[RMDB]
Chemical mapping of a 177-nucleotide RNA with 2A3 and DMS. The data come from the RNA Mapping Database (RMDB), library M2PK50. In probing experiments dimethyl sulfate is read out at A N1 and C N3, which are open when not base-paired.
RNA sequence: GGGAACGACUCGAGUAGAGUCGAAAACCUCCAAACUUCGGUUUGGAGGAAAAGGAGGCAAAAUAAGAACGGAAAGGGAAGACGGAACCCAAGUCUAUAAAAAAAGUACCAUGUUCGCAUGGUACAACACUCCAAAUAUCUUCGGAUAUUUGGAGUGAAAAGAAACAACAACAACAAC
Reactivity to 2A3 in 0.01 (KOAc 150mM, MgCl2 10mM, bicine 150mM(pH8.5), 24C), signal-to-noise 3, nucleotides 027 to 126: c010c010u000c000c000a010a010a000c000u050u080c160g070g020u000u010u010g010g000a020g000g020a030a010a000a000g030g030a010g020g030c030a010a020a050a210u190a140a100g060a140a020c040g020g030a060a050a040g030g010g000a000a030g030a020c020g020g030a060a030c010c010c000a010a020g020u000c050u060a180u280a060a090a000a000a000a010a020g000u000a000c000c000a010u010g010u020u030c080g000c090a000u000g000g000u020a000c000a000a000
Reactivity to DMS in 0.01 (KOAc 150mM, MgCl2 10mM, bicine 150mM(pH8.5), 24C), signal-to-noise 3, nucleotides 027 to 126: c020c010u000c000c000a000a000a000c000u000u010c210g020g000u000u010u000g000g000a010g000g000a010a010a110a110g000g000a060g000g010c060a040a070a090a060u010a090a080g000a070a110c130g000g000a030a080a060g010g000g000a060a030g010a030c070g000g000a070a090c030c040c030a110a100g000u000c080u010a110u030a020a000a050a100a050a080a110g010u000a000c000c000a010u000g000u000u030c170g020c010a000u000g000g000u000a000c000a060a080
For DMS the reverse transcriptase was MarathonRT. For DMS, 2,974 sequencing reads were counted. The RNA was probed in 150 mM KOAc, 10 mM MgCl2 and 150 mM bicine (pH 8.5) at 24 C.